The data come from the RNA Mapping Database (RMDB), library OK2TST.
Chemical mapping of a 177-nucleotide RNA with DMS.
The RNA was probed in 150 mM KOAc, 10 mM MgCl2 and 150 mM bicine (pH 8.5) at 24 C.
For DMS the reverse transcriptase was MarathonRT.
[RMDB]
RNA sequence: GGGAACGACUCGAGUAGAGUCGAAAAGCUCAGCAGCAAGCAACGAUGAUAGUGGAAACUCGUUCCAGUAUCGACACAUCUAGCAUGCACCGCGGUCUGUACGAGAAGACUCAAAACUUGGAAAACACAUUAGGGGACACUUCGGUGUCCCCUAAUGAAAAGAAACAACAACAACAAC
Reactivity to DMS in 0.01 (KOAc 150mM, MgCl2 10mM, bicine 150mM(pH8.5), 24C), signal-to-noise 2, nucleotides 027 to 126: g000c030u000c030a100g000c020a100g020c050a030a070g000c030a010a080c210g010a070u000g000a040u000a000g000u020g050g000a050a140a110c070u000c100g000u000u010c050c000a050g000u000a010u000c020g000a130c110a160c080a030u000c020u010a170g010c070a090u000g060c030a080c100c190g020c040g000g010u000c000u010g000u020a050c030g010a050g030a150a090g010a010c010u000c020a060a020a030a060c130u010u000g040g010a060a090a170a060c290a130